[RMDB]
RNA sequence: GGGAACGACUCGAGUAGAGUCGAAAAGAUAUGGACCACGACAUGAUGAGUUUCGGAAACGAAAUGGCAUCAACAGCGUGAGUCCUAAGUCAAAAGACCACCCUAUAGUUCGCUAUAGGGUGGUCAAGUAGCUGUUAUAGUUCGCUAUAACAGCUACAAAAGAAACAACAACAACAAC
Reactivity to DMS in 0.01 (KOAc 150mM, MgCl2 10mM, bicine 150mM(pH8.5), 24C), signal-to-noise 7, nucleotides 027 to 126: g000a050u000a300u000g000g000a010c000c010a010c000g010a080c080a230u000g010a010u000g000a300g000u000u000u000c000g020g000a070a100a210c000g010a010a000a000u000g020g000c010a010u000c000a030a050c300a110g000c020g000u000g000a170g010u000c000c000u000a010a100g010u010c060a090a100a090a150g000a000c000c000a010c000c000c000u000a010u000a000g010u010u020c240g020c000u000a000u000a000g000g000g020u000g000g000u000c000a000a040
Reactivity to 2A3 in 0.01 (KOAc 150mM, MgCl2 10mM, bicine 150mM(pH8.5), 24C), signal-to-noise 3, nucleotides 027 to 126: g010a000u060a030u130g000g010a000c000c010a000c000g080a060c070a150u130g010a010u000g000a000g030u020u000u000c010g000g040a070a060a050c020g010a030a000a020u120g250g200c010a000u000c000a050a090c060a070g060c010g020u020g050a150g000u000c000c000u010a170a020g100u020c020a040a040a010a210g010a000c000c000a000c000c000c020u000a000u000a000g050u040u080c300g000c200u000a000u000a000g000g000g010u000g000g000u000c000a000a000
Background: Chemical mapping of a 177-nucleotide RNA with DMS and 2A3. For DMS, 7,524 sequencing reads were counted. For DMS the reverse transcriptase was MarathonRT. Conditions: 150 mM KOAc, 10 mM MgCl2 and 150 mM bicine (pH 8.5), 24 C.